An RNA of 207 nucleotides, treated with DMS and 2A3 and read out base by base. For 2A3 the reverse transcriptase was SuperScript II with manganese. It was measured as part of the RMDB library OK3TST. For 2A3, 740 sequencing reads were counted. For DMS the reverse transcriptase was MarathonRT.
RNA sequence: GGGAACGACUCGAGUAGAGUCGAAAAUUCACUUAAUACCACUGCUUAAGUAUUUUGUUUUCAGAUCCAGUUGAGGCUGAUGAAAGUAUGACUCAGGGAAAUAGCCACAUGUGCAGGUAUACACGUAUAGCUCUAAAAAGGUUGGCUCAUGGACUCAGAGUGAGGUAAUAUUCGUAUUACCUCACUCAAAAGAAACAACAACAACAAC
Reactivity to DMS in 0.01 (KOAc 150mM, MgCl2 10mM, bicine 150mM(pH8.5), 24C), signal-to-noise 2, nucleotides 027 to 156: u000u010c060a070c060u000u000a070a140u000a080c010c040a130c070u020g000c100u010u000a070a130g030u000a040u000u000u000u000g000u020u010u000u000c050a050g000a140u010c000c050a080g000u030u010g010a100g000g050c010u000g000a040u010g010a060a030a130g020u000a060u000g000a100c060u000c020a140g000g040g010a040a040a090u000a060g020c030c020a040c040a040u000g050u000g010c010a030g020g010u000a060u000a050c040a020c070g040u000a070u000a070g020c020u020c040u000a000a060a050a090a060g030g030u010u000g020g000c060u000c070a090u000g020g010a170c010u000c020a300
Reactivity to 2A3 in 0.01 (KOAc 150mM, MgCl2 10mM, bicine 150mM(pH8.5), 24C), signal-to-noise 2, nucleotides 027 to 156: u050u000c010a000c020u080u130a040a000u060a170c100c050a080c110u110g060c040u210u080a080a000g020u050a190u100u170u080u090g030u010u140u010u060c070a050g020a110u000c050c050a040g060u060u010g060a030g010g000c000u010g030a050u030g080a120a070a010g040u060a040u090g040a090c020u010c050a010g100g000g020a000a040a050u070a020g030c050c010a050c040a030u110g040u060g050c060a000g000g060u090a040u030a070c050a010c040g060u070a010u050a120g000c020u000c070u150a030a090a050a050a030g060g000u050u010g040g000c020u000c080a060u060g040g030a020c030u090c100a020